[RMDB]
RNA sequence: GGGAACGACUCGAGUAGAGUCGAAAACGCCUUCGAACAGGUCUUACUCUUAAUAAAUUGCUAUUUAAUUUUAUUACCGACCUGUUCGCAGCGGGUAAAGAUUAAAUAAUGCUAAAUUUAUUAAGAGCAAUUAUUAUAAGUUCGCUUAUAAUAAUUGAAAAGAAACAACAACAACAAC
Reactivity to 2A3 in 0.01 (KOAc 150mM, MgCl2 10mM, bicine 150mM(pH8.5), 24C), signal-to-noise 1, nucleotides 027 to 126: c080g070c000c000u070u100c060g040a070a030c030a040g020g020u030c030u040u090a040c000u010c000u000u000a000a000u000a000a000a000u040u090g000c000u000a000u000u020u010a010a000u010u030u020u280a150u000u060a040c000c000g090a040c000c020u000g010u010u000c030g000c000a000g060c030g060g000g000u020a040a050a000g030a000u010u020a020a000a010u050a040a030u130g010c010u090a180a040a040u000u000u000a000u000u010a000a000g000a000g000